[RMDB]
RNA sequence: GGGAACGACUCGAGUAGAGUCGAAAAUGGCCAUGCUUCGGCAUGGCCACUUGCGUAGCACGCAAAUUUUUUUAGCUACGCUUAAUAAAAAUUUGCGAUAUAAGUUGGGGUUGUUCGCAACCCCAAAGACCUUGUUUGAAUUCGUUCAAACAAGGUCAAAAGAAACAACAACAACAAC
Reactivity to 2A3 in 0.01 (KOAc 150mM, MgCl2 10mM, bicine 150mM(pH8.5), 24C), signal-to-noise 1, nucleotides 027 to 126: u060g000g050c000c000a000u010g000c020u020u090c200g050g060c010a000u000g020g050c000c010a000c000u020u070g000c030g050u030a020g010c060a010c040g030c010a020a010a070u140u120u080u030u000u050u130a010g000c030u070a020c110g040c040u020u040a090a090u100a050a060a000a010a020u010u020u050g010c020g010a020u000a000u010a300a030g140u070u000g010g010g000g020u010u000g020u030u000c080g000c110a000a040c000c020c000c000a000a000a000
Reactivity to DMS in 0.01 (KOAc 150mM, MgCl2 10mM, bicine 150mM(pH8.5), 24C), signal-to-noise 1, nucleotides 027 to 126: u000g000g000c000c000a010u010g010c000u000u020c220g030g020c010a020u000g000g020c000c000a000c030u000u000g000c050g040u000a040g020c080a150c050g000c000a000a000a000u010u000u000u010u000u010u000a090g020c000u000a060c120g020c020u000u000a030a060u000a000a040a020a030a020u000u000u000g000c000g020a150u010a060u000a060a090g000u000u000g010g000g000g010u000u000g000u000u010c120g010c020a000a030c000c010c010c000a000a030a070